[RMDB]
RNA sequence: GGGAACGACUCGAGUAGAGUCGAAAAUUUCAUUUGUACACCGAGGAACGUAGCGUUCUUCACCUUUACGUAAUCGGAAUGAAACUCCACUACAUUUUUAGUCUUGUAGGAGUAGGAAAACGAACCAAUAUAGCUGCGCAUUCGUGCGCAGCUAUAUAAAAGAAACAACAACAACAAC
Reactivity to DMS in 0.01 (KOAc 150mM, MgCl2 10mM, bicine 150mM(pH8.5), 24C), signal-to-noise 1, nucleotides 027 to 126: u000u000u000c000a170u070u040u070g000u010a000c290a280c030c030g000a010g000g190a150a010c000g030u050a170g000c120g000u000u000c110u040u040c110a050c280c070u050u000u010a070c240g000u000a130a000u000c010g000g000a110a050u000g000a090a000a120c000u000c010c040a300c110u000a030c000a000u000u000u050u030u000a000g000u030c030u000u000g000u000a040g000g000a010g030u050a000g020g000a010a130a200a000c050g000a190a070c170c090a070
Reactivity to 2A3 in 0.01 (KOAc 150mM, MgCl2 10mM, bicine 150mM(pH8.5), 24C), signal-to-noise 2, nucleotides 027 to 126: u010u010u010c000a000u000u000u190g090u070a090c000a080c060c000g000a030g020g040a060a030c000g000u140a000g130c030g140u060u120c000u240u060c020a100c000c000u200u300u000a000c000g000u020a020a210u000c070g000g000a100a020u000g000a100a000a000c000u030c000c030a100c040u090a070c050a160u140u030u030u000u030a120g220u080c060u120u090g000u000a100g000g020a020g050u090a040g010g220a070a160a000a000c070g060a070a000c070c000a070